[RMDB]
RNA sequence: GGGAACGACUCGAGUAGAGUCGAAAAAGGAUUGCCCACUAUCACAACUGCAUGUGGAGGCAGGGAGGAUCAAACAGGUAUUAACCGAGUAUUGUCUAAACACAGGGAUGCAUUUGAAGCCUGAAGAAAUCACCUCCAGUUUCGACUGGAGGUGAUUAAAAGAAACAACAACAACAAC
Reactivity to 2A3 in 0.01 (KOAc 150mM, MgCl2 10mM, bicine 150mM(pH8.5), 24C), signal-to-noise 1, nucleotides 027 to 126: a000g060g040a080u070u060g060c020c030c000a000c040u150a090u160c060a010c060a230a040c030u070g020c060a110u120g030u060g170g050a080g000g000c040a050g060g000g010a050g050g000a040u020c040a000a090a020c040a040g000g080u060a070u170u100a120a010c020c020g000a020g030u040a160u040u150g070u040c040u110a000a000a070c050a020c020a060g000g000g120a050u040g000c060a110u030u030u140g070a050a040g070c020c010u010g040a030a030g040a020
Reactivity to DMS in 0.01 (KOAc 150mM, MgCl2 10mM, bicine 150mM(pH8.5), 24C), signal-to-noise 2, nucleotides 027 to 126: a080g000g000a170u010u000g020c060c040c030a130c120u020a080u000c060a060c090a100a080c130u010g000c080a100u010g010u020g000g000a110g000g020c030a090g020g000g030a110g000g000a060u010c100a070a050a080c070a120g000g010u000a050u030u030a130a110c030c040g000a090g010u000a050u000u000g010u010c070u000a040a040a040c110a050c070a050g030g020g010a060u010g020c090a110u000u000u000g000a050a140g000c000c020u000g000a110a060g000a060
Chemical mapping of a 177-nucleotide RNA with 2A3 and DMS. The reactions ran in a buffer of 150 mM KOAc, 10 mM MgCl2 and 150 mM bicine (pH 8.5), at 24 C. DMS adducts were read by reverse transcription with MarathonRT.